Conditions: 150 mM KOAc, 10 mM MgCl2 and 150 mM bicine (pH 8.5), 24 C. Structure probing data (2A3 and DMS) for a 177-nucleotide construct. For 2A3 the reverse transcriptase was SuperScript II with manganese. The DMS profile rests on 2,135 reads. Reactivities are rounded to 0.1 and cut off at 0 and 3. DMS adducts were read by reverse transcription with MarathonRT.
RNA sequence: GGGAACGACUCGAGUAGAGUCGAAAAACGGUAUUGACCUGAAUGUCGGUGUGACCACGUUCAAUGAGGUUUACACCGUCAGUAACGCAAUGUGCAAUGCAGCACGCGAGGUGAUUCUGAUGGCGGAUGAUACGUACGGCUUCGGCCGUACGUAUCAAAAAGAAACAACAACAACAAC
Reactivity to 2A3 in 0.01 (KOAc 150mM, MgCl2 10mM, bicine 150mM(pH8.5), 24C), signal-to-noise 2, nucleotides 027 to 126: a000c070g060g100u210a160u030u230g200a110c000c000u040g080a060a060u000g000u030c000g000g160u000g000u020g000a000c000c000a000c000g150u150u120c120a120a050u230g040a100g010g000u030u000u000a000c000a020c000c000g000u000c000a000g050u060a020a000c020g000c000a020a100u010g000u000g000c000a010a130u210g040c010a050g040c030a020c100g000c010g020a010g040g000u000g030a040u110u000c000u000g210a180u000g080g050c020g030g090a050
Reactivity to DMS in 0.01 (KOAc 150mM, MgCl2 10mM, bicine 150mM(pH8.5), 24C), signal-to-noise 1, nucleotides 027 to 126: a100c030g010g000u000a100u000u050g000a060c010c020u060g060a120a020u000g020u010c010g000g060u000g000u010g000a000c020c000a080c010g050u050u040c230a040a140u060g050a030g000g030u000u000u000a000c010a000c020c000g000u010c010a000g000u000a090a160c000g020c020a040a090u000g000u010g000c070a090a070u050g000c060a180g040c020a010c020g000c000g000a040g060g010u000g000a090u000u020c030u000g000a140u000g000g010c000g030g010a220